[RMDB]
RNA sequence: GGGAACGACUCGAGUAGAGUCGAAAAGAAAAGAGCGUAAUCGCGUCUUGACGUGAGUGAGUCUAGACUGUAGGCUAUCCCAAGUGGGAUAGUAUAACUCACAAUACGCUGAUCUACAGUCAAAAGAGAUUAAUAUAAAUUUCGAUUUAUAUUAAUCAAAAGAAACAACAACAACAAC
Reactivity to DMS in 0.01 (KOAc 150mM, MgCl2 10mM, bicine 150mM(pH8.5), 24C), signal-to-noise 5, nucleotides 027 to 126: g010a090a060a080a030g000a010g010c000g000u000a060a300u010c010g000c000g010u000c050u040u010g020a020c000g040u000g000a050g000u010g000a020g000u010c110u010a050g010a020c010u000g010u000a010g010g020c010u000a010u000c000c000c000a300a210g030u050g010g010g000a000u020a010g020u000a040u020a020a050c000u000c010a000c010a090a130u000a010c000g000c020u000g000a070u020c000u000a000c010a000g000u000c000a180a060a130a080g010a200
Reactivity to 2A3 in 0.01 (KOAc 150mM, MgCl2 10mM, bicine 150mM(pH8.5), 24C), signal-to-noise 9, nucleotides 027 to 126: g160a010a090a000a000g020a000g000c000g000u010a030a050u050c010g000c010g020u030c090u140u250g120a020c000g000u010g010a020g000u000g000a000g000u010c040u050a050g010a000c000u000g000u000a000g010g000c000u000a010u000c000c000c020a110a090g300u300g060g000g000a000u000a000g000u010a020u030a010a000c000u000c000a000c000a000a020u020a010c000g000c000u000g010a030u000c000u000a000c000a000g000u010c010a050a070a000a000g100a000
Structure probing data (DMS and 2A3) for a 177-nucleotide construct.
High 2A3 reactivity points to a flexible backbone, as in loops and unpaired stretches.
Reactivities are given for positions 27 through 126.
The data come from the RNA Mapping Database (RMDB), library OK1LIB.
The RNA was probed in 150 mM KOAc, 10 mM MgCl2 and 150 mM bicine (pH 8.5) at 24 C.